[RMDB]
RNA sequence: GGGAACGACUCGAGUAGAGUCGAAAAUUGGCUUCAGUUGAGAGAGAUACUGACAGAGCAAUCAGACUUGGUUUUGUUAUCUGCAGAAGCCAAGUCCGUGACUGAAGAGGAAUUAGAGGAAGGUUUAACCGGACUACUAUCGACAAGUUCACAGGAACCUAAGUAGGUGUUUCGACACCUACUUAGGAAAAGAAACAACAACAACAAC
Reactivity to DMS in 0.01 (KOAc 150mM, MgCl2 10mM, bicine 150mM(pH8.5), 24C), signal-to-noise 2, nucleotides 027 to 156: u000u000g010g000c000u010u020c010a090g050u000u000g000a170g010a120g000a150g000a100u010a100c060u000g020a150c120a080g000a060g000c020a050a190u000c080a100g010a040c050u010u000g000g010u000u000u000u010g020u000u000a160u010c160u020g000c080a300g000a020a020g010c010c000a020a040g020u000c010c030g030u000g000a030c030u010g020a050a050g070a120g010g000a060a130u000u000a040g020a140g020g020a090a080g000g010u000u000u000a060a100c070c050g000g000a080c010u000a060c080u010a130u000c000g010a080c010a070a170g010u030u010c000a000c030a160g020g030a090a170
Reactivity to 2A3 in 0.01 (KOAc 150mM, MgCl2 10mM, bicine 150mM(pH8.5), 24C), signal-to-noise 4, nucleotides 027 to 156: u050u030g040g000c000u020u010c040a040g020u080u230g060a060g010a010g010a000g000a080u080a170c030u060g040a080c090a080g110a030g050c040a040a060u100c030a020g030a050c010u010u020g010g010u040u050u030u030g090u110u200a220u110c100u150g000c010a030g050a100a020g030c000c010a000a000g000u000c000c010g060u080g030a010c030u040g000a020a040g000a030g030g100a070a090u110u080a130g020a040g040g010a090a020g050g020u020u000u230a040a050c020c000g000g010a000c000u100a020c010u010a050u110c020g010a020c000a060a050g000u050u030c020a010c020a090g040g060a030a020
Notes
An RNA of 207 nucleotides, treated with DMS and 2A3 and read out base by base. The DMS profile rests on 2,551 reads. 2A3 adducts were read by reverse transcription with SuperScript II with manganese. The RNA was probed in 150 mM KOAc, 10 mM MgCl2 and 150 mM bicine (pH 8.5) at 24 C. DMS adducts were read by reverse transcription with MarathonRT. It was measured as part of the RMDB library OK3TST. The 2A3 profile rests on 1,949 reads.